The data come from the RNA Mapping Database (RMDB), library OK2TRN.
The record gives the reactivity of an RNA of 177 nucleotides to 2A3 and DMS.
For DMS the reverse transcriptase was MarathonRT.
Values are in units of 0.01, from 0 to 300, in steps of 10.
The DMS profile rests on 3,094 reads.
DMS (dimethyl sulfate) methylates the pairing face of unpaired adenines and cytosines.

RNA sequence: GGGAACGACUCGAGUAGAGUCGAAAAGACACCAAUCCACAGCACCGAGCAGUGACAGAAGGUGCCCCAAGGUGUGGUGAAACUCGCUGGACGGUCCCCAGGAUGUUGGCAGCACAUUCACCGGACACUUAUUGUGGUCUUUCGAGACCACAAUAAGAAAAGAAACAACAACAACAAC
Reactivity to 2A3 in 0.01 (KOAc 150mM, MgCl2 10mM, bicine 150mM(pH8.5), 24C), signal-to-noise 2, nucleotides 027 to 126: g040a000c030a000c060c010a010a090u050c030c020a060c000a030g030c010a020c030c020g090a040g060c120a110g110u090g220a150c040a060g110a100a030g000g010u010g000c000c010c010c010a130a040g100g030u130g020u050g000g000u030g000a070a040a040c010u030c030g040c040u050g060g070a060c030g030g060u040c060c010c020c010a080g020g030a050u080g040u140u060g060g070c020a020g000c040a010c010a050u000u060c020a010c050c000g040g060a020c030a010
Reactivity to DMS in 0.01 (KOAc 150mM, MgCl2 10mM, bicine 150mM(pH8.5), 24C), signal-to-noise 4, nucleotides 027 to 126: g000a150c030a040c040c030a140a150u000c020c010a070c110a140g000c010a060c060c060g010a210g020c070a130g010u000g010a110c130a060g010a130a140g010g000u000g000c020c020c050c060a140a140g010g000u010g010u010g010g030u000g000a040a060a070c060u010c100g000c080u000g010g000a080c050g000g010u000c030c010c040c090a070g000g010a040u010g000u000u000g010g010c040a040g010c040a080c120a070u000u000c020a080c060c010g000g020a100c140a110